Structure probing data (DMS and 2A3) for a 177-nucleotide construct. Values cover nucleotides 27 to 126. As a SHAPE reagent, 2A3 marks flexible, mostly unpaired nucleotides at the ribose 2'-OH. It was measured as part of the RMDB library OK2TST.

RNA sequence: GGGAACGACUCGAGUAGAGUCGAAAAUACUCGCAUUUGUGGUGGUUAUCCAGCAAUUGUUGAAGGUGGAUGCUAAAGUGGCUGCCAAGGAGAAGAAGCUCAAUGUCGGUGGUGUGAAGGAGAGCUGCUACCGAAAAUCAUUCGUGAUUUUCGGUAGAAAAGAAACAACAACAACAAC
Reactivity to DMS in 0.01 (KOAc 150mM, MgCl2 10mM, bicine 150mM(pH8.5), 24C), signal-to-noise 4, nucleotides 027 to 126: u000a100c030u000c030g020c120a100u000u030u000g030u000g010g020u010g000g000u000u010a090u010c030c130a080g010c040a060a120u010u000g020u010u000g020a080a130g030g010u000g010g010a080u000g020c070u000a050a110a080g010u000g010g010c050u000g020c030c030a090a100g000g010a080g000a090a060g000a090a100g010c050u000c050a070a110u020g010u000c040g010g010u000g020g010u010g020u000g010a080a080g000g000a190g010a080g010c070u000g010
Reactivity to 2A3 in 0.01 (KOAc 150mM, MgCl2 10mM, bicine 150mM(pH8.5), 24C), signal-to-noise 2, nucleotides 027 to 126: u100a000c020u020c020g000c040a090u000u020u150g080u060g050g030u020g000g050u070u070a020u110c010c020a030g010c030a060a120u060u090g100u080u120g060a100a030g100g010u010g000g060a020u060g030c040u070a140a000a080g070u050g050g010c020u020g000c010c010a050a030g050g020a050g010a080a030g040a030a010g030c020u020c050a040a060u090g060u040c010g050g040u050g010g040u030g030u080g050a000a040g040g010a040g000a000g040c020u050g020

Notes
The RNA was probed in 150 mM KOAc, 10 mM MgCl2 and 150 mM bicine (pH 8.5) at 24 C.